[RMDB]
RNA sequence: GGGAACGACUCGAGUAGAGUCGAAAAGAUAUGGAUAUGACGAAGGGAGUGGAGCCAUUAGGUCGGAAACGACCUGUGGCGAUGAAACUCCUCGAAUAUCCUAAGUCAAAAGUUCGCUUCGGCGAACCAAAUAGGGGAGGUUCGCCUCCCCUAUUUGAAAAGAAACAACAACAACAAC
Reactivity to 2A3 in 0.01 (KOAc 150mM, MgCl2 10mM, bicine 150mM(pH8.5), 24C), signal-to-noise 4, nucleotides 027 to 126: g030a010u060a060u190g010g000a000u010a020u030g260a250c100g080a170a170g220g020g010a030g030u040g000g050a000g000c010c000a020u160u300a010g030g000u000c010g000g030a090a090a090c010g010a010c000c010u000g000u000g000g000c000g030a020u000g000a000a010a000c000u020c000c010u010c000g000a010a020u020a010u020c000c010u010a110a050g020u050c050a070a020a050a200g000u000u010c020g000c030u050u080c280g170g010c010g000a000a000c010
Reactivity to DMS in 0.01 (KOAc 150mM, MgCl2 10mM, bicine 150mM(pH8.5), 24C), signal-to-noise 5, nucleotides 027 to 126: g010a040u000a300u000g000g000a020u010a010u000g010a230c170g010a190a140g010g000g010a020g020u000g000g010a100g020c000c000a010u000u020a000g020g010u000c000g010g000a090a070a190c000g010a010c000c000u000g020u000g000g010c000g000a050u020g000a120a170a030c010u000c000c000u000c010g010a230a040u000a010u010c000c000u000a060a160g000u000c020a090a100a120a110g010u000u000c000g010c010u000u010c230g020g000c000g010a010a000c010